The record gives the reactivity of an RNA of 177 nucleotides to 2A3 and DMS.
DMS adducts were read by reverse transcription with MarathonRT.
For 2A3 the reverse transcriptase was SuperScript II with manganese.
The RNA was probed in 150 mM KOAc, 10 mM MgCl2 and 150 mM bicine (pH 8.5) at 24 C.
Values cover nucleotides 27 to 126.
RNA sequence: GGGAACGACUCGAGUAGAGUCGAAAAGAAAUUUUAGAAGAACGUGGUUUAACACCACCGGAUCUACAUAUUUAUGACGAAGAGGGUGUUAAGAGAAUUGCAAGUACUAUGAUAGUGUCACAGUGGCGUCCGAUAUCGAAUUCGUUCGAUAUCGGACAAAAGAAACAACAACAACAAC
Reactivity to 2A3 in 0.01 (KOAc 150mM, MgCl2 10mM, bicine 150mM(pH8.5), 24C), signal-to-noise 1, nucleotides 027 to 126: g020a010a050a000u110u190u070u130a040g020a100a000g020a040a010c000g000u020g000g060u040u090u150a050a020c050a000c040c000a010c000c000g020g020a010u000c020u030a040c050a070u050a100u070u120u080a090u080g110a040c050g060a050a060g010a050g090g020g000u040g050u070u000a050a000g070a010g040a080a080u110u040g050c020a090a040g000u010a020c020u020a000u090g080a080u100a060g070u020g010u010c010a020c040a160g090u090g070g010c000
Reactivity to DMS in 0.01 (KOAc 150mM, MgCl2 10mM, bicine 150mM(pH8.5), 24C), signal-to-noise 2, nucleotides 027 to 126: g000a050a060a090u020u000u010u000a020g040a080a060g000a260a140c200g010u000g000g000u000u010u000a070a110c190a120c000c000a030c000c040g000g010a230u010c000u000a040c140a020u000a110u000u000u000a100u030g000a080c050g020a050a040g010a060g000g000g000u000g020u010u010a030a030g020a090g000a110a080u000u000g000c050a080a100g000u000a080c050u000a070u030g010a090u000a050g020u000g000u000c010a040c110a050g020u000g000g000c130